[RMDB]
RNA sequence: GGGAACGACUCGAGUAGAGUCGAAAAUGCUAAGGGUUUGAUAUCUGCUAAAACCCGGUGCAUUCAUCAAUGCAGGUUAAGCCAAAGGGAUGUCCCGACCGGAGGCAGACAAUCCAGGGAACCGGAUAAAAGAUUGGUGGGUUCGCCCACCAAUCAACUUACAGUAAACGUUCGCGUUUACUGUAAGAAAAGAAACAACAACAACAAC
Reactivity to 2A3 in 0.01 (KOAc 150mM, MgCl2 10mM, bicine 150mM(pH8.5), 24C), signal-to-noise 3, nucleotides 027 to 156: u140g000c020u020a010a040g000g000g030u020u000u020g050a050u070a030u080c060u080g010c010u060a040a040a000a030c020c020c000g010g010u020g000c030a080u080u150c030a060u090c080a080a200u150g030c020a010g040g020u090u170a120a020g010c000c010a030a030a010g040g010g010a050u040g030u030c000c010c000g000a000c000c000g020g000a000g010g020c000a000g000a010c020a030a080u070c060c040a020g030g130g070a060a140c090c040g010g030a020u080a120a110a010a010g000a010u010u000g010g000u000g030g000g040u030u040c160g010c020c000c000a010c010c000a010a000u000c000a000a000
Reactivity to DMS in 0.01 (KOAc 150mM, MgCl2 10mM, bicine 150mM(pH8.5), 24C), signal-to-noise 2, nucleotides 027 to 156: u000g020c020u000a300a220g000g030g010u000u020u010g020a230u000a030u010c060u000g030c090u000a170a040a020a010c030c000c000g000g030u000g010c010a030u010u000c040a120u000c110a070a190u010g020c040a060g030g010u020u000a130a190g050c020c020a050a300a240g000g000g000a120u000g010u000c000c010c020g010a070c050c020g010g000a300g020g010c040a130g020a060c020a080a080u000c030c020a050g050g000g000a130a120c030c030g020g000a100u000a110a050a110a130g000a020u000u010g000g050u000g040g020g020u000u000c300g000c000c010c020a000c000c000a010a000u010c000a040a070